[RMDB]
RNA sequence: GGGAACGACUCGAGUAGAGUCGAAAAAGCUGGUAGUACUACGGUACUACCAGCAUAAUUCGUGGUUCGAAAACCUCCCACGCAAAAAAACUAAGGAAAAACGCCGAGUAGUACGCUACUCGUCGAAGGUACCGGAAUCAGUUCGCUGAUUCCGGAAGGAUUACCUCUUGUUCGCAAGAGGUAAUCCAAAAGAAACAACAACAACAAC
Reactivity to 2A3 in 0.01 (KOAc 150mM, MgCl2 10mM, bicine 150mM(pH8.5), 24C), signal-to-noise 1, nucleotides 027 to 156: a010g020c020u020g010g000u010a030g010u010a000c000u020a040c150g050g000u000a000c000u000a010c020c000a000g020c000a020u030a020a040u040u060c020g000u010g030g000u110u110c070g040a010a070a150a290c020c000u020c000c020c000a000c020g150c050a000a030a030a010a020a080a090c150u230a030a050g000g050a060a170a020a020a050c010g000c010c010g000a000g000u000a000g000u010a020c090g000c010u000a000c000u000c000g010u000c000g030a030a030g060g000u030a050c000c000g000g020a000a000u000c000a000g090u100u070c130g000c130u000g000a000u010u000c000c010g000g000a000a000
Structure probing data (2A3) for a 207-nucleotide construct. It was measured as part of the RMDB library M2RFPK. Reactivities are given for positions 27 through 156. The RNA was probed in 150 mM KOAc, 10 mM MgCl2 and 150 mM bicine (pH 8.5) at 24 C.